[RMDB]
RNA sequence: GGGAACGACUCGAGUAGAGUCGAAAAGGUGUACGAGGAGCAUUCGUUGAUAAAGACGGUACCUAUGACAAAGUUUACAUUCUUUUCACCGAUACUAUAGGCUCAAAGAGAAUUGUUAAAAUUCCGUAUAUAGCACAAAUGUGCCUAAACGACGAAGCAUAGGCGGUGUUUUCGAACACCGCCUAUGAAAAGAAACAACAACAACAAC
Reactivity to DMS in 0.01 (KOAc 150mM, MgCl2 10mM, bicine 150mM(pH8.5), 24C), signal-to-noise 1, nucleotides 027 to 156: g000g070u010g030u000a040c050g020a070g020g020a050g050c010a030u000u000c040g060u000u000g000a170u010a020a080a280g000a030c040g030g050u000a070c050c020u000a100u000g020a080c120a080a080a110g000u000u000u000a070c160a150u000u000c000u000u000u010u000c020a090c020c000g060a250u000a050c030u010a160u000a020g000g000c090u000c030a060a050a080g020a130g030a030a110u000u010g000u010u000a050a020a020a110u000u000c000c010g000u000a080u000a150u010a050g000c010a030c040a030a070a110u000g020u010g000c010c020u000a020a150a090c010g010a060c080g000a020a140g000
Reactivity to 2A3 in 0.01 (KOAc 150mM, MgCl2 10mM, bicine 150mM(pH8.5), 24C), signal-to-noise 2, nucleotides 027 to 156: g140g010u040g000u010a030c070g010a050g030g070a030g050c010a060u050u080c040g000u010u030g060a180u090a110a010a000g090a020c010g040g000u020a060c020c040u070a110u180g020a030c080a070a060a080g010u070u090u050a090c040a020u140u110c050u000u000u000u000c040a030c000c010g010a020u020a120c060u100a080u040a190g060g000c020u030c130a030a080a000g140a010g000a060a000u070u030g030u110u140a090a090a020a000u170u020c010c000g020u010a040u010a000u110a120g020c110a000c000a030a220a220u220g000u020g050c000c000u060a060a070a000c060g150a000c060g000a050a000g040